Chemical mapping of a 207-nucleotide RNA with 2A3. Values cover nucleotides 27 to 156. Source: RMDB library M2RFPK, as collected in RNAgym. Conditions: 150 mM KOAc, 10 mM MgCl2 and 150 mM bicine (pH 8.5), 24 C. 2A3 adducts were read by reverse transcription with SuperScript II with manganese.

RNA sequence: GGGAACGACUCGAGUAGAGUCGAAAACUGCCGCCGGGACGCAGUGAUCAUCGCAGGGUCGCACGGUCGCCUCGGGUCGGCCUCGUGUCGGCUCGACCUGCGAGGGGAGCGAGUGGCGAGCCCGACCAAAACUUUCUCGCCUUCGGGCGAGAAAGAAGCAAGAACCUAUGUUCGCAUAGGUUCUUGCAAAAGAAACAACAACAACAAC
Reactivity to 2A3 in 0.01 (KOAc 150mM, MgCl2 10mM, bicine 150mM(pH8.5), 24C), signal-to-noise 1, nucleotides 027 to 156: c040u030g020c000c040g000c020c020g020g050g030a010c060g000c040a130g080u010g010a100u040c050a020u080c050g060c080a060g000g000g130u140c080g020c050a070c080g070g120u060c040g130c090c030u040c040g000g000g020u030c010g000g020c000c010u090c160g240u300g050u030c040g040g010c040u050c020g030a030c000c000u090g000c010g010a030g000g030g020g000a030g030c020g010a080g130u050g030g000c060g000a040g050c040c020c010g020a020c000c000a100a040a010a110c000u000u000u000c000u000c000g000c000c020u020u060c110g060g000g000c000g000a000g000a000a000a000g000a000a000